[RMDB]
RNA sequence: GGGAACGACUCGAGUAGAGUCGAAAAGCUGAAUCCUGCAGAACAUUCCCACAUUUGAAAACCCCAUAAUCCUUUAAAAGUUUUAUGUGUAAACUCUCAAACAAUCAGGCAUAAGAGAAGAAUACAAGAGCUUGUAAGUCUUCGGACUUACAAGCUCAAAAGAAACAACAACAACAAC
Reactivity to 2A3 in 0.01 (KOAc 150mM, MgCl2 10mM, bicine 150mM(pH8.5), 24C), signal-to-noise 1, nucleotides 027 to 126: g030c000u000g000a040a020u030c000c050u030g000c000a020g000a110a040c000a160u040u010c000c000c000a010c030a000u000u070u070g040a010a020a060a060c020c020c000c000a000u040a010a010u050c000c010u060u050u270a200a300a020a050g070u000u010u010u010a010u000g080u000g040u040a040a040a040c010u030c000u010c000a030a040a270c030a000a180u060c000a000g050g000c000a100u080a100a090g000a040g020a010a180g060a080a010u040a090c110a260a000